The record gives the reactivity of an RNA of 170 nucleotides to 2A3 and DMS. It was measured as part of the RMDB library 15KLIB. High 2A3 reactivity points to a flexible backbone, as in loops and unpaired stretches.
RNA sequence: GGGAACGACUCGAGUAGAGUCGAAAAAUAGGCUUAUCAAAAGAGGUGGAGGGACUGGCCCGAUGAAACCCGUCAGCCAGAAAUGGUGCCAAUUCCUGCAGCGGAAACGUUGAAAGAUGAGCCGAUGGCGCUCGAGGGUUCGCCCUCGAGAAAAGAAACAACAACAACAAC
Reactivity to 2A3 in 0.01 (KOAc 150mM, MgCl2 10mM, bicine 150mM(pH8.5), 24C), signal-to-noise 6, nucleotides 027 to 129: a000u150a030g000g000c000u020u020a010u040c040a070a080a000a050g120a090g060g060u100g040g060a080g010g010g010a010c020u020g020g000c030c000c020g050a090u080g040a040a040a030c010c010c000g050u030c020a010g000c000c000a010g060a020a090a030u130g030g020u100g020c020c000a000a020u040u020c010c000u050g040c000a010g000c010g000g030a040a020a030c030g030u010u040g030a080a050a010g020a000u030g000a000g000c010c000g010a050u080g050g020c020g030
Reactivity to DMS in 0.01 (KOAc 150mM, MgCl2 10mM, bicine 150mM(pH8.5), 24C), signal-to-noise 6, nucleotides 027 to 129: a080u050a120g000g040c040u040u000a030u000c020a110a070a000a090g020a070g030g060u030g010g030a070g000g080g000a040c000u010g050g020c040c000c000g000a080u030g010a050a030a090c020c080c010g030u010c080a220g040c000c030a070g020a050a040a020u010g050g000u000g080c050c040a020a020u000u020c020c020u060g040c050a020g030c000g030g030a120a110a090c030g000u040u030g030a080a110a080g000a010u000g030a030g000c000c000g000a090u050g000g010c060g040

Description: For 2A3, 21,733 sequencing reads were counted. DMS adducts were read by reverse transcription with MarathonRT. For 2A3 the reverse transcriptase was SuperScript II with manganese.